RNA sequence: GGGAACGACUCGAGUAGAGUCGAAAAAUUAACGACCUCUCAGCCCCUCCACCUUGGGGUGCCCUAUCCGAGCACUGCAGUUUCGGUAGAAAGGCUAAGCACCUCGCAAUGAGGUAAGGUGGGACUUAUAUCUAAUUUCGUUCGCGAAAUUAGAUAUAAAAGAAACAACAACAACAAC
Reactivity to DMS in 0.01 (KOAc 150mM, MgCl2 10mM, bicine 150mM(pH8.5), 24C), signal-to-noise 2, nucleotides 027 to 126: a090u010u000a090a120c090g010a050c070c040u000c030u010c070a190g010c000c000c000c010u000c000c000a010c000c000u000u000g000g020g010g020u000g010c010c000c010u000a100u000c000c010g010a030g000c040a070c140u000g000c130a150g010u000u020u000c000g000g010u000a010g000a080a060a140g010g010c070u010a010a080g020c250a120c000c000u010c000g010c200a100a050u000g000a030g000g000u000a010a000g000g000u000g000g000g040a060c120u000u000
Reactivity to 2A3 in 0.01 (KOAc 150mM, MgCl2 10mM, bicine 150mM(pH8.5), 24C), signal-to-noise 2, nucleotides 027 to 126: a000u140u090a090a060c040g060a050c010c000u050c000u010c020a030g070c010c000c000c010u010c000c000a010c000c000u010u010g000g000g020g000u040g010c000c030c000u000a000u000c000c000g000a000g030c030a040c240u290g030c080a110g000u200u150u050c000g000g030u000a010g010a040a030a010g000g050c010u010a050a030g030c000a040c020c000u020c000g030c080a090a180u300g010a000g060g010u000a000a000g030g000u020g000g000g000a000c020u020u010
Chemical mapping of a 177-nucleotide RNA with DMS and 2A3.
For 2A3 the reverse transcriptase was SuperScript II with manganese.
For DMS the reverse transcriptase was MarathonRT.
Source: RMDB library VIROID, as collected in RNAgym.